[RMDB]
RNA sequence: GGGAACGACUCGAGUAGAGUCGAAAAGGUAGGAGUUAAGGGGAGCAACAGAUGCUGAAUACUGGACUUCCCUGAUAGCUGAAGAGAUGUUGAGAGAUGACAGUAUUCCAGAGAUAUUUUAAACCCAGUCCUGAUAUAGAUUCGUCUAUAUCAGGACAAAAGAAACAACAACAACAAC
Reactivity to 2A3 in 0.01 (KOAc 150mM, MgCl2 10mM, bicine 150mM(pH8.5), 24C), signal-to-noise 3, nucleotides 027 to 126: g050g010u060a030g010g080a040g020u070u130a040a050g000g000g010g000a000g030c020a030a130c000a020g080a070u110g020c060u080g080a080a040u090a150c020u010g030g000a050c010u030u040c000c000c010u010g010a040u040a020g010c010u020g020a060a000g070a020g000a060u070g040u140u110g060a050g000a000g010a050u060g020a000c000a010g030u050a040u080u000c030c010a020g000a010g020a100u010a090u110u110u020u100a070a100a050c020c000c010a010
Reactivity to DMS in 0.01 (KOAc 150mM, MgCl2 10mM, bicine 150mM(pH8.5), 24C), signal-to-noise 9, nucleotides 027 to 126: g010g010u000a070g010g010a080g010u000u010a130a060g010g000g020g000a050g010c080a110a120c050a040g000a100u000g020c180u000g000a120a050u000a050c010u000g000g000a190c030u000u000c000c010c000u000g000a070u010a060g000c030u010g010a090a090g010a060g010a050u000g000u000u000g000a090g010a080g010a060u000g000a090c040a040g010u000a050u010u000c050c060a080g000a110g010a100u000a020u010u010u010u000a050a100a140c020c010c020a180